The record gives the reactivity of an RNA of 177 nucleotides to DMS and 2A3.
RNA sequence: GGGAACGACUCGAGUAGAGUCGAAAAUCAAACUCAAGGACCAUAUUCUGGUAACCCGCCUCACAAUAAACUAAAAGCCCCAACUUUACGCCCAGUUGUUGUGCAAGGACCAAACACAGAAUUUGCAUAUCUUACUUCAGUUCGCUGAAGUAAGAUAAAAAGAAACAACAACAACAAC
Reactivity to DMS in 0.01 (KOAc 150mM, MgCl2 10mM, bicine 150mM(pH8.5), 24C), signal-to-noise 3, nucleotides 027 to 126: u070c100a050a070a110c050u010c030a040a060g000g000a150c070c030a040u010a120u000u000c010u000g010g000u040a040a100c060c050c040g000c010c010u000c030a010c070a060a030u020a050a100a030c080u000a070a070a060a100g010c030c000c020c010a060a050c070u000u010u010a070c150g000c000c010c000a120g020u000u000g040u000u020g020u040g010c050a050a000g000g000a200c040c000a030a020a050c090a070c090a070g000a010a140u050u020u050g050c050a160
Reactivity to 2A3 in 0.01 (KOAc 150mM, MgCl2 10mM, bicine 150mM(pH8.5), 24C), signal-to-noise 4, nucleotides 027 to 126: u100c010a060a060a030c050u090c080a030a080g110g040a060c000c010a040u040a120u220u030c050u060g070g000u050a090a100c000c000c040g060c020c000u030c010a030c000a010a080u180a080a130a040c100u100a080a050a020a070g010c010c000c010c010a020a020c030u060u120u060a050c030g000c000c010c020a020g000u010u020g010u000u010g000u010g030c040a020a020g020g000a010c030c020a090a090a030c070a020c010a080g070a060a040u070u060u020g020c020a040